[RMDB]
RNA sequence: GGGAACGACUCGAGUAGAGUCGAAAACGGCAAAAAAGCAAACUUGACCACCAAGGAUAAAAGAGAUCUUAUCCAAGGAUGCAAGAGAUAAUCUCACUUUUGACACCCACUGAUCUCGAACUUAAAGAAAACCGAGACUACUUCGGUAGUCUCGGAAGACAAUUACAUCGUUCGCGAUGUAAUUGUCAAAAGAAACAACAACAACAAC
Reactivity to 2A3 in 0.01 (KOAc 150mM, MgCl2 10mM, bicine 150mM(pH8.5), 24C), signal-to-noise 5, nucleotides 027 to 156: c020g070g010c060a050a010a010a040a050a040g100c060a130a090a070c040u090u080g040a160c030c020a020c010c020a070a050g010g010a020u020a020a040a030a030g030a000g000a010u010c000u020u010a000u010c020c020a030a040g020g020a020u060g010c020a070a020g020a010g020a060u140a190a200u120c050u020c050a050c030u030u020u040u060g080a060c020a060c020c000c020a050c110u070g010a020u010c010u000c030g010a060a070c040u140u200a130a080a040g110a030a100a050a010c010c000g000a000g000a000c000u000a010c000u000u040c130g080g000u000a000g000u010c000u000c000g000g000a000a000
Reactivity to DMS in 0.01 (KOAc 150mM, MgCl2 10mM, bicine 150mM(pH8.5), 24C), signal-to-noise 1, nucleotides 027 to 156: c080g000g020c090a010a090a030a040a000a040g050c010a170a090a090c030u000u000g010a230c190c010a130c050c040a040a300g000g010a050u000a020a030a110a100g000a200g000a170u000c000u000u010a040u000c040c010a050a300g020g000a060u010g000c010a010a170g020a020g000a080u000a010a070u010c080u040c070a100c020u000u000u000u000g010a160c110a060c040c020c000a120c060u000g000a060u000c000u000c030g050a130a150c110u010u000a020a080a100g010a050a070a140a170c020c020g000a000g000a010c000u000a000c000u000u020c250g100g010u000a000g000u000c000u010c000g000g020a020a010

The data come from the RNA Mapping Database (RMDB), library M2RFPK.
Structure probing data (2A3 and DMS) for a 207-nucleotide construct.
Values are in units of 0.01, from 0 to 300, in steps of 10.